Chemical mapping of a 207-nucleotide RNA with 2A3.
Conditions: 150 mM KOAc, 10 mM MgCl2 and 150 mM bicine (pH 8.5), 24 C.
RNA sequence: GGGAACGACUCGAGUAGAGUCGAAAAGAAGGGCGAUCCGCGCGCGGAUCAGCCCGAUUAGAUGUAACUAUUACGCGCGCAUUAAUGGCGGAAACGCCUAGGCCGAGCACGCCGGGGCUCAGGCCGAAAGAAAGAAAGAAUAACCCGGCGAAAAGAACGUAUAGCAUAGUUUCGACUAUGCUAUACGAAAAGAAACAACAACAACAAC
Reactivity to 2A3 in 0.01 (KOAc 150mM, MgCl2 10mM, bicine 150mM(pH8.5), 24C), signal-to-noise 1, nucleotides 027 to 156: g100a000a060g000g000g010c010g000a000u000c030c010g010c020g040c000g000c000g010g000a000u010c110a040g020c000c000c000g000a000u000u090a010g020a020u100g050u060a130a060c100u080a180u150u150a010c000g000c000g000c000g000c000a000u020u130a010a070u010g000g020c010g030g000a100a050a000c010g000c000c000u000a000g000g000c000c000g000a000g020c020a000c040g000c000c010g010g000g000g000c000u000c030a030g010g000c000c010g000a040a030a000g020a000a030a000g140a000a110a020g040a000a040u120a090a030c020c000c000g000g000c000g000a000a000a000a000g040a170a020
About this RNA:
High 2A3 reactivity points to a flexible backbone, as in loops and unpaired stretches. For 2A3 the reverse transcriptase was SuperScript II with manganese.